[RMDB]
RNA sequence: GGGAACGACUCGAGUAGAGUCGAAAAGAGGUGGUCAGCCGGAUCGUCGAACCCGUUGCGGCCGAACUAGUCCGGCGUGGAAGCUCGUUUUGCGGAUUGCUGUAUGUUGGUCUCGCGAUUACCGCCCUGCGUAUAGUUAGUUCGCUAACUAUACGCAAAAAGAAACAACAACAACAAC
Reactivity to 2A3 in 0.01 (KOAc 150mM, MgCl2 10mM, bicine 150mM(pH8.5), 24C), signal-to-noise 3, nucleotides 027 to 126: g050a010g000g050u060g000g040u060c020a000g000c030c010g020g020a050u040c030g040u020c040g040a160a120c010c010c000g120u100u200g020c140g030g000c010c000g030a070a040c010u020a040g110u020c010c000g020g000c020g040u040g030g040a070a030g020c010u030c040g020u010u070u050u090g030c020g010g000a050u050u080g030c030u060g080u300a200u180g140u120u130g050g010u000c040u030c090g000c010g020a030u030u060a050c010c030g000c000c030c000
Reactivity to DMS in 0.01 (KOAc 150mM, MgCl2 10mM, bicine 150mM(pH8.5), 24C), signal-to-noise 9, nucleotides 027 to 126: g010a080g020g020u000g010g010u000c040a170g020c010c010g010g000a020u000c300g000u000c020g010a110a160c020c010c020g020u010u010g020c160g030g020c160c010g000a050a050c080u000a130g000u000c000c000g000g010c010g000u010g010g010a120a090g000c030u000c040g010u000u000u000u000g010c020g000g000a060u000u000g000c030u000g010u010a070u010g010u000u000g010g010u000c020u000c070g010c020g000a060u010u000a070c070c050g000c010c030c040
Chemical mapping of a 177-nucleotide RNA with 2A3 and DMS. DMS adducts were read by reverse transcription with MarathonRT. For 2A3, 3,136 sequencing reads were counted. The reactions ran in a buffer of 150 mM KOAc, 10 mM MgCl2 and 150 mM bicine (pH 8.5), at 24 C.